[RMDB]
RNA sequence: GGGAACGACUCGAGUAGAGUCGAAAAGAUAUGGAUAAGCGAAGAACAUCCCGGACGAUGAAAUCGGAAACGAUGGAGUCCCGGAUGGGAGCUUAUCCUAAGUCAAAGGAAAGGUUCGCCUUUCCAACAUAUACCGGCUGUUCGCAGCCGGUAUAUGAAAAGAAACAACAACAACAAC
Reactivity to DMS in 0.01 (KOAc 150mM, MgCl2 10mM, bicine 150mM(pH8.5), 24C), signal-to-noise 2, nucleotides 027 to 126: g010a030u010a300u000g000g020a000u010a000a000g030c000g010a100a150g000a200a190c010a020u000c000c000c260g010g010a010c000g020a090u000g010a040a250a010u000c010g010g000a120a060a160c030g000a000u000g000g000a110g010u000c010c000c300g000g000a010u000g000g000g010a120g010c000u000u000a000u000c000c000u000a000a080g000u000c050a070a120a160g000g000a010a000a020g000g000u010u000c220g000c000c000u000u000u000c000c000a070a100
Reactivity to 2A3 in 0.01 (KOAc 150mM, MgCl2 10mM, bicine 150mM(pH8.5), 24C), signal-to-noise 1, nucleotides 027 to 126: g010a020u070a030u150g000g020a000u010a030a000g000c070g140a280a060g070a070a130c010a000u030c000c000c050g000g000a010c020g220a300u090g040a050a020a010u010c000g000g080a080a040a030c010g010a000u000g000g000a020g000u000c000c000c000g020g000a010u020g000g000g030a000g000c000u000u020a000u000c000c000u020a060a010g000u020c020a000a100a210g000g010a010a010a000g010g030u070u120c270g210c030c020u000u000u010c000c000a010a000
Record summary
The record gives the reactivity of an RNA of 177 nucleotides to DMS and 2A3. 2A3 is a SHAPE reagent: it acylates the 2'-hydroxyl of flexible nucleotides of all four kinds. For 2A3, 1,682 sequencing reads were counted. 2A3 adducts were read by reverse transcription with SuperScript II with manganese. Source: RMDB library TTRDEL, as collected in RNAgym. Values cover nucleotides 27 to 126. The reactions ran in a buffer of 150 mM KOAc, 10 mM MgCl2 and 150 mM bicine (pH 8.5), at 24 C. DMS adducts were read by reverse transcription with MarathonRT.